[RMDB]
Overview:
Structure probing data (DMS and 2A3) for a 207-nucleotide construct. It was measured as part of the RMDB library OK3TST. 2A3 is a SHAPE reagent: it acylates the 2'-hydroxyl of flexible nucleotides of all four kinds. For 2A3 the reverse transcriptase was SuperScript II with manganese. The DMS profile rests on 7,370 reads. The reactions ran in a buffer of 150 mM KOAc, 10 mM MgCl2 and 150 mM bicine (pH 8.5), at 24 C.

RNA sequence: GGGAACGACUCGAGUAGAGUCGAAAAAUGUAUAUACAUACGUAUAUAUGUGUGUAUAUAUACUCACACACAUGUAUAUAUACACACAUACCAAGUUCAAAAUGCAACAGCCAAUUAGCGGACCAAUUAGUGUGUGUGUGUAGUGUGUGUGUAUAUAAGUUCGUAAUUAUUUCGAUAAUUACGAACUAAAAGAAACAACAACAACAAC
Reactivity to DMS in 0.01 (KOAc 150mM, MgCl2 10mM, bicine 150mM(pH8.5), 24C), signal-to-noise 3, nucleotides 027 to 156: a070u000g010u010a000u000a030u010a020c000a050u020a010c010g010u010a130u000a150u000a000u010g010u040g040u010g020u010a040u000a040u000a040u000a070c100u000c060a070c020a040c020a030c020a050u000g000u000a100u020a140u000a040u000a030c010a010c010a010c000a010u000a030c030c020a070a130g010u010u010c080a050a060a130a100u000g010c040a060a110c040a140g010c020c030a060a160u000u000a080g020c070g000g000a100c130c080a040a120u000u000a060g000u000g000u000g020u010g020u000g000u010g020u000a060g000u000g020u000g010u010g000u000g000u010a050u000a050u000a110
Reactivity to 2A3 in 0.01 (KOAc 150mM, MgCl2 10mM, bicine 150mM(pH8.5), 24C), signal-to-noise 4, nucleotides 027 to 156: a000u080g010u000a010u000a000u010a020c000a000u030a030c010g040u020a110u010a070u040a090u300g010u010g000u000g030u020a010u000a000u010a000u050a130c020u040c010a010c000a000c000a000c000a000u060g160u130a060u020a010u010a000u010a250c000a000c000a000c000a010u010a000c000c010a090a000g000u010u050c050a120a140a020a120u150g050c060a120a050c030a220g090c060c020a100a080u110u100a140g070c090g050g020a030c020c050a090a150u140u080a150g010u020g000u000g000u000g000u000g000u000g020u070a060g010u010g000u010g000u000g000u010g020u050a000u040a010u010a110